[RMDB]
RNA sequence: GGGAACGACUCGAGUAGAGUCGAAAACUGAUCACCACAGUGAAGAAAGUGAUUGGGAAACAGAGACUUAGCGCUCUAGUGCAUGACUCGUUUCCCGCUCCAGAAAAGUCUCAUCUUCGGAUGAGACGGACUAGGAAGAGUUCGCUCUUCCUAGUCCAAAAGAAACAACAACAACAAC
Reactivity to DMS in 0.01 (KOAc 150mM, MgCl2 10mM, bicine 150mM(pH8.5), 24C), signal-to-noise 3, nucleotides 027 to 126: c050u000g010a090u000c040a070c010c200a160c150a090g000u010g010a100a130g010a100a090a100g020u010g000a080u000u020g010g010g000a030a000a020c020a110g030a030g010a060c010u010u010a090g030c030g030c010u010c190u010a080g060u000g020c040a050u010g000a080c000u010c010g000u000u010u000c000c000c000g010c110u000c020c040a130g000a070a060a050a140g010u000c000u000c000a010u000c000u000u020c260g030g000a010u010g020a010g000a000c010
Reactivity to 2A3 in 0.01 (KOAc 150mM, MgCl2 10mM, bicine 150mM(pH8.5), 24C), signal-to-noise 1, nucleotides 027 to 126: c020u030g020a080u090c020a000c060c040a050c060a090g060u080g180a120a080g090a140a220a020g070u080g030a070u040u140g000g010g010a000a010a040c070a110g000a030g030a040c010u060u110a080g020c020g010c030u110c150u190a100g020u030g010c010a020u020g010a060c000u000c010g000u000u000u000c000c000c000g010c000u030c010c000a040g130a090a120a020a030g010u020c000u000c010a000u000c010u040u100c230g070g000a000u000g000a000g010a000c000